[RMDB]
RNA sequence: GGGAACGACUCGAGUAGAGUCGAAAACAUAUAAUUCUUCUAAAAUGCUGUACUUUAAAGGAAUUGUCGAGCUGAAUAUGAUAUGCGUCACAUCUUUGAUAUCUUUAAGUUCAGAUACCUUUUGAUCCGUACGACGUGAAUUCGUUCACGUCGUACGAAAAGAAACAACAACAACAAC
Reactivity to 2A3 in 0.01 (KOAc 150mM, MgCl2 10mM, bicine 150mM(pH8.5), 24C), signal-to-noise 2, nucleotides 027 to 126: c000a010u240a030u090a270a190u170u050c060u030u040c040u060a070a060a120a110u160g000c030u050g000u100a060c070u130u150u100a020a000a020g020g010a060a050u120u030g050u060c060g030a020g010c010u000g110a070a050u130a040u130g050a070u090a080u300g080c020g040u010c020a040c000a070u000c020u030u190u300g030a030u060a000u080c000u010u040u010a040a010g010u000u040c000a010g030a010u070a070c020c020u090u110u100u200g070a020u000c040
Reactivity to DMS in 0.01 (KOAc 150mM, MgCl2 10mM, bicine 150mM(pH8.5), 24C), signal-to-noise 1, nucleotides 027 to 126: c130a100u010a110u010a130a100u000u000c040u030u000c070u010a070a060a070a170u010g010c050u000g010u000a020c050u010u000u000a010a020a100g000g010a090a060u010u000g010u000c070g010a030g010c070u000g000a050a090u010a090u010g000a020u000a050u000g020c150g000u020c070a040c110a040u020c080u010u010u000g020a060u020a030u000c010u010u000u000a050a030g030u000u000c030a030g020a100u000a060c100c050u020u000u000u000g000a120u010c110
This 177-nucleotide RNA was probed chemically with 2A3 and DMS. Reactivities are given for positions 27 through 126. The reactions ran in a buffer of 150 mM KOAc, 10 mM MgCl2 and 150 mM bicine (pH 8.5), at 24 C. The data come from the RNA Mapping Database (RMDB), library OK2TST. For 2A3, 977 sequencing reads were counted.